[RMDB]
This 207-nucleotide RNA was probed chemically with DMS and 2A3. The data come from the RNA Mapping Database (RMDB), library M2RFPK. The reactions ran in a buffer of 150 mM KOAc, 10 mM MgCl2 and 150 mM bicine (pH 8.5), at 24 C. For DMS, 6,662 sequencing reads were counted. For 2A3, 665 sequencing reads were counted.
RNA sequence: GGGAACGACUCGAGUAGAGUCGAAAAACGGACUACGGUCCGAAGGGUUAGGGGUACUAGUGUGAAUGCCCGGCUAGUACCCUGUGCUAGUGGUUUAUCUACUGAUGUUCAAUUAAGGGCAUUUGAAAAAAGACUCCUAACUUCGGUUAGGAGUCAACAAAAAAGAUGAGUUCGCUCAUCUUUUUUGAAAAGAAACAACAACAACAAC
Reactivity to DMS in 0.01 (KOAc 150mM, MgCl2 10mM, bicine 150mM(pH8.5), 24C), signal-to-noise 3, nucleotides 027 to 156: a120c040g010g010a040c010u000a090c230g070g000u000c010c000g010a030a060g030g000g030u000u000a190g020g000g020g020u000a010c000u000a030g000u010g000u010g000a070a060u000g000c000c010c000g010g020c010u000a010g010u000a010c000c000c000u000g010u010g020c070u000a110g050u000g020g010u000u000u000a090u030c010u010a200c060u010g010a100u000g000u000u010c040a060a180u010u000a130a150g020g020g000c000a010u000u000u010g010a000a060a110a130a090a120g010a030c000u000c000c010u000a000a010c000u000u000c300g050g000u000u000a010g010g010a010g010u000c020a000a080
Reactivity to 2A3 in 0.01 (KOAc 150mM, MgCl2 10mM, bicine 150mM(pH8.5), 24C), signal-to-noise 1, nucleotides 027 to 156: a000c000g000g010a000c000u050a040c190g110g000u000c000c010g010a060a020g060g010g020u070u190a020g000g000g000g000u000a000c000u030a000g030u010g030u030g210a040a010u000g000c010c010c000g000g000c000u000a000g000u000a000c000c000c010u000g050u090g020c010u010a030g040u010g060g020u060u250u110a090u090c010u000a010c020u060g080a110u130g140u280u250c180a150a070u140u290a230a300g000g000g000c000a000u070u030u010g020a020a000a000a020a000a000g000a000c010u000c010c000u000a000a000c000u060u070c240g060g000u000u000a000g000g000a000g000u000c000a000a000